[RMDB]
RNA sequence: GGGAACGACUCGAGUAGAGUCGAAAAGAUAUGGAGCCUCUACAACAGCAUCGAUCUCGGAAACGAGGGAGCUGUCUUGUAGAGGGCUCCUAAGUCAAAGACAGUGGUGGUUCGCCACCACUGUCAAGGCUGUACUAUAGUUCGCUAUAGUACAGCCAAAAGAAACAACAACAACAAC
Reactivity to 2A3 in 0.01 (KOAc 150mM, MgCl2 10mM, bicine 150mM(pH8.5), 24C), signal-to-noise 3, nucleotides 027 to 126: g040a040u100a070u150g000g010a010g010c000c000u000c010u020a000c010a020a010c000a010g030c000a150u300c100g090a080u030c010u000c000g030g000a140a050a040c010g000a000g000g000g020a020g000c010u010g030u010c050u040u020g010u000a020g020a040g000g010g020c010u000c000c000u000a060a020g020u000c030a120a020a100g010a000c000a010g000u000g000g030u010g010g100u120u230c270g080c120c000a000c000c000a000c000u000g010u000c000a000a000
Reactivity to DMS in 0.01 (KOAc 150mM, MgCl2 10mM, bicine 150mM(pH8.5), 24C), signal-to-noise 3, nucleotides 027 to 126: g000a050u000a300u000g010g010a030g020c020c010u000c000u000a010c020a040a030c030a010g000c010a300u000c140g000a060u030c000u000c000g010g000a160a070a170c000g010a030g000g020g000a000g020c000u000g010u010c070u010u010g010u010a020g000a030g020g010g030c000u000c000c000u000a020a050g020u000c050a120a120a150g010a010c010a020g020u000g010g030u000g010g020u000u010c210g020c010c000a010c000c000a000c000u000g010u000c000a040a060